[RMDB]
Background:
The record gives the reactivity of an RNA of 177 nucleotides to DMS. Conditions: 150 mM KOAc, 10 mM MgCl2 and 150 mM bicine (pH 8.5), 24 C. The DMS profile rests on 566 reads.
RNA sequence: GGGAACGACUCGAGUAGAGUCGAAAAAGCGCAGCGCAAAUGGUGGCGAAUAGAACAGCCGUCAAGCUGCUAUUACCGGAACCACUGGCCACGCCUUAGUUGGAAGCAAGUCGUAGUUAUAGUUAGCCACAGACCGGAGGUUCGCCUCCGGUCUGUGAAAAGAAACAACAACAACAAC
Reactivity to DMS in 0.01 (KOAc 150mM, MgCl2 10mM, bicine 150mM(pH8.5), 24C), signal-to-noise 1, nucleotides 027 to 126: a130g000c200g000c000a000g000c040g060c100a110a160a130u020g000g010u000g070g100c000g020a190a200u000a100g030a030a090c240a300g010c000c010g000u000c060a070a090g000c030u000g020c010u000a030u010u000a150c020c050g000g020a120a060c050c080a060c010u000g010g000c010c030a010c080g000c010c000u000u000a090g010u000u000g000g000a140a110g010c030a060a080g000u000c040g010u000a020g000u030u000a040u000a040g000u020u010a090g010c140